[RMDB]
The record gives the reactivity of an RNA of 177 nucleotides to 2A3 and DMS.
For DMS the reverse transcriptase was MarathonRT.
The RNA was probed in 150 mM KOAc, 10 mM MgCl2 and 150 mM bicine (pH 8.5) at 24 C.
Reactivities are given for positions 27 through 126.
RNA sequence: GGGAACGACUCGAGUAGAGUCGAAAAUACGUACCGUUCGCGGUACGUAACUUACCGAGAACCUUGCUCGGUAUAACAAGGAAACCCUUGGAAACAAGCGAACAAGAUUACCCUUCGGGGUAAUCAAGAAAGACAUCAUCUUCGGAUGAUGUCUUUCAAAAGAAACAACAACAACAAC
Reactivity to 2A3 in 0.01 (KOAc 150mM, MgCl2 10mM, bicine 150mM(pH8.5), 24C), signal-to-noise 2, nucleotides 027 to 126: u040a000c000g010u000a010c000c020g010u000u040c250g010c020g080g010u000a000c000g000u000a000a010c010u030u040a020c020c000g020a010g020a090a140c050c030u120u190g020c000u020c010g050g000u020a020u020a000a010c010a010a020g080g000a150a140a050c050c000c000u000u050g080g040a030a080a020c030a100a030g070c080g070a020a020c070a150a030g000a010u010u000a010c060c000c000u020u060c250g030g000g000g000u010a000a000u000c000a000a020
Reactivity to DMS in 0.01 (KOAc 150mM, MgCl2 10mM, bicine 150mM(pH8.5), 24C), signal-to-noise 2, nucleotides 027 to 126: u000a000c000g010u000a000c000c000g000u000u000c170g030c000g070g030u000a010c000g020u000a000a070c170u000u000a030c000c000g000a010g010a110a100c080c240u010u030g000c000u000c000g010g010u000a010u010a100a090c070a010a010g010g010a140a070a150c130c020c000u000u000g000g050a080a130a130c100a050a060g000c080g020a060a090c090a110a090g000a030u000u000a000c000c000c000u010u000c220g040g010g000g020u000a000a000u000c010a010a100